[RMDB]
RNA sequence: GGGAACGACUCGAGUAGAGUCGAAAAUUUUCUGGGUCUUUCCAAGCCCCAGUUUCCCCCUUCUACCAUCUGUGCAUGGCUCCAUGACCUAAGUGGAGACCUGGGAGAGAGUGUUAGGAAGACCGAAGAAUCGGUGCUAAUUCGUUAGCACCGAUUCAAAAGAAACAACAACAACAAC
Reactivity to DMS in 0.01 (KOAc 150mM, MgCl2 10mM, bicine 150mM(pH8.5), 24C), signal-to-noise 2, nucleotides 027 to 126: u000u010u000u000c010u000g000g000g000u000c000u010u010u000c180c210a060a080g020c060c000c000c000a010g020u000u000u000c030c000c010c210c010u000u000c040u000a100c040c050a120u010c040u000g040u020g020c020a060u020g010g030c010u010c070c020a040u000g000a180c190c160u000a090a130g020u010g000g000a000g010a120c120c060u000g020g000g000a050g000a040g000a150g030u010g010u010u000a040g030g000a050a080g000a080c210c130g020a140a160
The record gives the reactivity of an RNA of 177 nucleotides to DMS. Source: RMDB library OK2TRN, as collected in RNAgym. DMS adducts were read by reverse transcription with MarathonRT. For DMS, 937 sequencing reads were counted.